[RMDB]
RNA sequence: GGGAACGACUCGAGUAGAGUCGAAAAGUCGGUGACAUGACCAAGGACGACAUGGACGAGACGCAGCUUGAAGAAUUCGUACGAUGGAAGCGCAGCGUAGCCGAGUGGCACACCGAGCGCAAGGUUCGAGGUACGAAGUGGGGCAGGUUCUACAACGGCACAGCACUUAAUUCGUUAAGUGCUGUGCAAAAGAAACAACAACAACAAC
Reactivity to 2A3 in 0.01 (KOAc 150mM, MgCl2 10mM, bicine 150mM(pH8.5), 24C), signal-to-noise 3, nucleotides 027 to 156: g030u050c040g010g040u040g040a070c060a080u060g060a020c020c030a060a050g090g020a020c030g010a010c020a060u030g030g000a030c050g020a030g010a030c090g000c040a070g000c050u080u140g030a040a040g060a110a150u090u070c030g000u030a010c010g120a150u120g080g070a040a010g010c020g030c060a030g040c020g010u020a020g000c000c000g060a060g070u250g010g010c050a030c010a020c080c030g090a090g040c010g000c000a010a110g020g010u020u080c020g080a020g040g020u040a020c000g020a030a000g040u070g020g000g000g010c020a010g000g040u040u040c010u070a080c050a130a030c050g090
Reactivity to DMS in 0.01 (KOAc 150mM, MgCl2 10mM, bicine 150mM(pH8.5), 24C), signal-to-noise 1, nucleotides 027 to 156: g030u000c050g000g010u000g020a130c080a070u000g050a100c060c050a080a270g040g040a160c000g000a030c060a150u020g020g000a090c020g030a080g040a080c000g000c100a150g010c010u010u000g030a060a070g030a070a160u000u020c050g000u000a070c020g000a150u000g010g000a070a100g040c020g000c030a080g020c040g070u000a100g070c030c000g020a230g050u010g000g000c040a150c040a010c050c010g020a150g040c010g000c010a100a020g020g000u000u000c030g000a070g020g020u000a030c040g000a060a050g020u000g000g020g040g010c030a010g000g010u000u000c000u000a080c020a060a040c090g000